Annotation
The record gives the reactivity of an RNA of 177 nucleotides to DMS and 2A3. For DMS, 2,154 sequencing reads were counted. It was measured as part of the RMDB library OK2TRN.

[RMDB]
RNA sequence: GGGAACGACUCGAGUAGAGUCGAAAAGAGGAUGCGAGACGUCAAGUGCUACCAGGGGACCGACAUCGUCCGUGGUUGCGAUCCGUUGGUGAAGCCCGUUGGCAGACAGGCCUGUGAUCUGCAGCCCAUGAGCUAUCAUCUUCGGAUGAUAGCUCAUAAAAGAAACAACAACAACAAC
Reactivity to DMS in 0.01 (KOAc 150mM, MgCl2 10mM, bicine 150mM(pH8.5), 24C), signal-to-noise 2, nucleotides 027 to 126: g030a120g000g000a070u000g010c030g010a020g000a120c040g040u000c050a100a090g010u010g000c000u000a010c040c020a070g020g010g000g010a080c060c090g000a070c090a060u000c070g010u000c140c150g020u010g000g000u010u010g010c000g010a050u000c030c050g020u030u000g010g020u000g010a120a080g010c020c010c060g050u000u010g000g030c040a030g020a120c110a060g010g000c060c030u010g020u000g010a040u000c020u000g020c050a130g010c030c010c060
Reactivity to 2A3 in 0.01 (KOAc 150mM, MgCl2 10mM, bicine 150mM(pH8.5), 24C), signal-to-noise 1, nucleotides 027 to 126: g070a020g010g000a000u050g030c050g090a060g000a010c020g050u050c040a050a030g050u020g090c050u040a050c010c050a010g050g020g000g050a000c000c030g030a050c010a100u070c060g030u000c020c050g000u050g000g030u040u010g000c000g000a080u050c040c090g100u040u060g000g010u080g060a060a030g000c000c000c010g100u100u130g060g030c000a010g060a140c000a000g090g070c040c050u060g040u180g070a060u000c010u040g000c000a000g040c000c000c000

The RNA was probed in 150 mM KOAc, 10 mM MgCl2 and 150 mM bicine (pH 8.5) at 24 C.